[RMDB]
RNA sequence: GGGAACGACUCGAGUAGAGUCGAAAACUUGCUAUGAACGCGUUCAUUUUUAAGUGACCGGACCCUAAAAUAUUCAGGUAGCAUGACGGAAGCUAUGAAUUAAUCCUGGUGGAGGGGUGUGUUCAGUGUAUGUAAUGUAGUUCGCUACAUUACAUACAAAAGAAACAACAACAACAAC
Reactivity to 2A3 in 0.01 (KOAc 150mM, MgCl2 10mM, bicine 150mM(pH8.5), 24C), signal-to-noise 6, nucleotides 027 to 126: c010u020u100g000c040u090a040u180g010a030a000c010g010c030g100u020u010c020a050u040u050u070u130u300a140a040g010u020g030a020c000c030g090g070a040c030c010c010u060a050a090a060a040u190a080u090u130c010a000g040g040u030a010g020c020a030u070g070a070c060g040g070a060a030g000c010u030a040u120g030a020a010u100u060a060a060u040c010c020u040g030g030u050g030g020a030g000g010g000g000u040g010u000g000u030u030c020a030g040u010
Reactivity to DMS in 0.01 (KOAc 150mM, MgCl2 10mM, bicine 150mM(pH8.5), 24C), signal-to-noise 5, nucleotides 027 to 126: c030u000u010g020c090u000a070u010g010a030a010c040g000c110g020u000u010c020a020u000u010u010u020u010a070a140g020u000g000a080c050c030g010g020a070c040c010c010u000a030a090a090a080u010a070u000u000c030a030g010g020u000a090g000c020a030u010g010a040c060g020g020a100a130g020c020u000a020u000g000a050a080u000u010a110a110u000c020c030u000g020g020u000g000g010a300g010g000g000g020u000g020u000g000u000u000c010a080g010u000
About this RNA: This 177-nucleotide RNA was probed chemically with 2A3 and DMS. The RNA was probed in 150 mM KOAc, 10 mM MgCl2 and 150 mM bicine (pH 8.5) at 24 C. Reactivities are given for positions 27 through 126. For 2A3, 7,725 sequencing reads were counted. High DMS reactivity at an A or C suggests that its Watson-Crick edge is free. It was measured as part of the RMDB library RFMREP. DMS adducts were read by reverse transcription with MarathonRT. The DMS profile rests on 5,695 reads.